[RMDB]
RNA sequence: GGGAACGACUCGAGUAGAGUCGAAAACAAGUUGGCUUCGGCCAACUUGAAAAGAAUGGUAGACUGAGACCGCUUAACUCAGAUAACCAAAAAUAGCGGAAAAAAGAUCAGUGUUCGCACUGAUCAACAACCUCCUAUCGUUCGCGAUAGGAGGUUGAAAAGAAACAACAACAACAAC
Reactivity to DMS in 0.01 (KOAc 150mM, MgCl2 10mM, bicine 150mM(pH8.5), 24C), signal-to-noise 1, nucleotides 027 to 126: c010a000a020g020u020u000g010g000c000u000u000c300g030g060c000c010a000a000c000u000u000g010a030a140a100a120g010a120a110u030g050g000u000a040g000a080c010u000g000a030g010a130c030c020g000c020u010u000a050a090c000u010c050a010g000a150u010a120a220c120c050a050a020a000a030a070u000a040g030c000g000g030a000a040a060a100a110a100g000a040u000c010a000g010u000g000u000u000c250g000c010a010c000u010g000a000u000c000a010a110
Reactivity to 2A3 in 0.01 (KOAc 150mM, MgCl2 10mM, bicine 150mM(pH8.5), 24C), signal-to-noise 1, nucleotides 027 to 126: c000a000a010g000u000u010g000g000c010u010u120c300g060g010c010c030a000a000c000u020u000g010a000a000a000a000g150a040a120u200g030g030u110a060g080a140c020u000g000a010g030a070c000c030g000c090u150u070a100a020c000u000c000a030g030a120u170a000a050c100c000a000a020a020a000a060u030a020g000c000g050g000a120a000a000a000a000a000g010a020u000c020a020g000u000g010u070u030c100g070c040a010c000u000g000a000u010c000a000a000